[RMDB]
Structure probing data (DMS and 2A3) for a 177-nucleotide construct. As a SHAPE reagent, 2A3 marks flexible, mostly unpaired nucleotides at the ribose 2'-OH. Reactivities are given for positions 27 through 126. It was measured as part of the RMDB library M2PK90.
RNA sequence: GGGAACGACUCGAGUAGAGUCGAAAAAUCUUGGCGAAGUCAGCGCGGAAGGAGCGCGCAACUCCUUACCCUCGCCUAUUUUUUUCCGCUCCCGUUCGCGAAAGCGUUCAGCGGAAAAGGGACCAAAAUCGUUCAAACUGUUCGCAGUUUGAACGAUAAAAGAAACAACAACAACAAC
Reactivity to DMS in 0.01 (KOAc 150mM, MgCl2 10mM, bicine 150mM(pH8.5), 24C), signal-to-noise 2, nucleotides 027 to 126: a070u020c110u010u000g020g000c020g020a080a100g010u010c090a100g000c110g000c270g020g000a040a000g000g000a030g020c030g000c300g030c240a070a090c000u010c020c010u000u020a120c040c000c000u010c020g000c010c000u000a000u000u000u000u000u000u000u000c000c030g000c010u010c060c050c020g000u000u000c010g000c010g040a080a090a230g000c000g000u000u000c020a060g020c000g000g000a000a000a000a030g000g000g000a100c060c090a060a040a090
Reactivity to 2A3 in 0.01 (KOAc 150mM, MgCl2 10mM, bicine 150mM(pH8.5), 24C), signal-to-noise 1, nucleotides 027 to 126: a000u060c050u000u090g000g030c000g040a060a030g170u210c040a050g130c020g040c060g080g030a050a030g040g020a020g040c030g000c030g000c090a020a190c010u030c010c010u010u160a300c020c000c010u010c030g000c020c000u010a080u020u050u010u000u000u010u020c010c010g000c010u020c000c080c010g010u000u020c000g000c000g060a130a010a020g010c020g010u000u020c000a000g000c010g010g000a000a000a000a010g040g000g010a020c060c020a030a030a040